[RMDB]
RNA sequence: GGGAACGACUCGAGUAGAGUCGAAAAGAUAUGGACCGGUGGACAUGAGCAGUCGGAAACGACUAUACGCUCAACAGCCACCCGGUCCUAAGUCAAACGGUAGGGUUGCUUCGGCAACCCUACCGAACUUUAACUCGAUGUUCGCAUCGAGUUAAAGAAAAGAAACAACAACAACAAC
Reactivity to DMS in 0.01 (KOAc 150mM, MgCl2 10mM, bicine 150mM(pH8.5), 24C), signal-to-noise 2, nucleotides 027 to 126: g010a030u000a300u010g000g000a020c000c000g000g020u010g030g010a040c110a150u000g010a020g020c000a040g000u000c010g010g000a060a050a150c000g010a020c000u000a130u010a100c300g020c010u010c010a020a090c300a110g000c020c000a010c110c020c020g050g020u000c010c000u020a000a040g000u000c020a100a080a190c040g000g010u000a000g020g000g000u000u000g000c020u000u000c130g030g010c000a000a000c010c000c000u000a000c010c000g000a000a060
This 177-nucleotide RNA was probed chemically with DMS. Reactivities are given for positions 27 through 126. It was measured as part of the RMDB library TTRDEL. The DMS profile rests on 1,868 reads.